Structure probing data (DMS and 2A3) for a 207-nucleotide construct. The RNA was probed in 150 mM KOAc, 10 mM MgCl2 and 150 mM bicine (pH 8.5) at 24 C. For DMS, 3,369 sequencing reads were counted. The data come from the RNA Mapping Database (RMDB), library M2RFPK. The 2A3 profile rests on 5,073 reads. Values are in units of 0.01, from 0 to 300, in steps of 10.
RNA sequence: GGGAACGACUCGAGUAGAGUCGAAAACUGCCGCCGGGACGCAGUGAUCCUCGCAGGGUCGCACGGUCGCCUCGGGUCGGCCUCGUGUCGACUCGACCUGCGAGGGGAGCGAGUGGCGAGCCCGACCAAAACUUUCUCGCCUUCGGGCGAGAAAGAACUAACUUUAUCGGUUCGCCGAUAAAGUUAGAAAAGAAACAACAACAACAAC
Reactivity to DMS in 0.01 (KOAc 150mM, MgCl2 10mM, bicine 150mM(pH8.5), 24C), signal-to-noise 1, nucleotides 027 to 156: c050u020g000c000c010g020c010c000g030g030g010a170c020g060c020a280g000u010g020a040u000c000c000u000c050g030c060a090g000g000g010u000c050g000c060a080c060g030g030u000c020g000c060c060u000c030g010g000g000u000c010g000g010c040c010u000c130g010u010g050u000c010g030a030c020u000c020g000a020c020c010u000g000c030g010a070g010g000g000g010a080g000c010g000a150g020u000g010g050c000g000a170g000c030c070c020g000a120c030c020a070a080a150a090c020u000u000u000c020u010c010g010c010c000u000u010c300g020g010g020c000g000a000g020a010a000a000g000a060a220
Reactivity to 2A3 in 0.01 (KOAc 150mM, MgCl2 10mM, bicine 150mM(pH8.5), 24C), signal-to-noise 4, nucleotides 027 to 156: c020u030g010c010c010g010c020c000g070g060g140a090c030g010c020a150g210u000g000a000u010c000c000u000c000g000c000a000g020g010g070u210c080g030c070a050c080g040g010u030c010g010c010c030u010c000g000g000g010u010c000g000g010c000c010u110c140g260u300g010u040c000g000a010c000u010c030g040a070c000c000u000g000c000g000a000g000g000g000g010a010g000c010g010a090g100u080g020g000c000g010a060g020c020c040c000g010a010c000c020a050a050a020a010c000u000u000u000c000u000c000g010c010c040u060u080c220g080g000g000c000g000a000g000a000a000a000g000a000a000